[RMDB]
RNA sequence: GGGAACGACUCGAGUAGAGUCGAAAACCCGUGAACCUUUACUAUAGCUUCGCAUUGGUAUUGGAUAAUUAAUGUGUAGGAUAGGUCGGAGACAUUGAAGCAGGCACGCUAGUGUUUGUGGAGUCGCGUGAUAGUUAAUCUUCGGAUUAACUAUCACAAAAGAAACAACAACAACAAC
Reactivity to 2A3 in 0.01 (KOAc 150mM, MgCl2 10mM, bicine 150mM(pH8.5), 24C), signal-to-noise 5, nucleotides 027 to 126: c010c000c000g000u060g080a060a090c020c010u090u170u210a100c030u090a040u070a140g160c030u040u050c050g010c020a030u010u020g040g000u080a100u080u240g170g060a080u100a160a020u140u040a040a020u040g040u010g040u060a020g000g030a030u010a040g000g040u030c020g020g040a080g020a030c010a020u130u150g010a010a000g010c010a010g020g000c010a000c010g060c100u100a080g000u000g000u010u000u020g020u030g010g020a030g000u000c010g020c030
Reactivity to DMS in 0.01 (KOAc 150mM, MgCl2 10mM, bicine 150mM(pH8.5), 24C), signal-to-noise 5, nucleotides 027 to 126: c010c000c000g010u010g010a130a100c050c020u010u010u000a120c030u000a060u000a140g020c050u010u010c100g020c020a070u010u000g000g010u000a040u010u010g020g000a160u010a080a050u000u000a030a030u010g010u010g000u000a030g000g000a060u000a030g010g010u010c090g000g000a170g010a020c030a130u000u010g010a100a170g000c010a020g000g010c010a010c010g010c210u000a110g010u000g010u000u000u000g010u000g010g000a050g010u000c020g020c200